This 177-nucleotide RNA was probed chemically with 2A3 and DMS. The RNA was probed in 150 mM KOAc, 10 mM MgCl2 and 150 mM bicine (pH 8.5) at 24 C.

[RMDB]
RNA sequence: GGGAACGACUCGAGUAGAGUCGAAAAUCACACGGUGGCUCGACCUGACACGUUCCUAGGAUCCUGCCGAGAGUGGGUACGAGUUCCGCCAGCUCGGUCACGUUAUCCCCGUGGGCGUGUACGACCGCUCACAACCAGUGUUCGCACUGGUUGUGAGAAAAGAAACAACAACAACAAC
Reactivity to 2A3 in 0.01 (KOAc 150mM, MgCl2 10mM, bicine 150mM(pH8.5), 24C), signal-to-noise 2, nucleotides 027 to 126: u110c020a020c000a020c080g050g040u060g010g050c040u010c060g030a080c020c010u030g070a020c020a000c090g020u090u140c000c000u010a010g040g010a060u080c050c030u080g010c000c030g050a070g040a030g100u120g020g030g020u050a080c040g020a050g100u140u060c020c010g050c070c000a050g000c060u030c010g010g110u090c050a020c110g050u070u060a070u160c000c000c000c030g040u090g000g010g010c040g000u000g020u020a070c000g010a020c020c010g000
Reactivity to DMS in 0.01 (KOAc 150mM, MgCl2 10mM, bicine 150mM(pH8.5), 24C), signal-to-noise 2, nucleotides 027 to 126: u010c050a070c180a160c110g010g010u000g010g030c080u000c040g000a080c020c040u000g010a090c070a130c010g010u000u000c010c000u000a040g000g000a040u010c090c040u010g020c010c010g000a060g000a090g020u010g010g010g020u010a060c070g000a180g000u010u000c030c030g040c050c050a100g020c000u000c010g010g000u000c060a040c060g000u000u010a070u000c030c000c060c040g000u000g000g010g010c020g020u000g020u000a090c060g000a100c060c030g010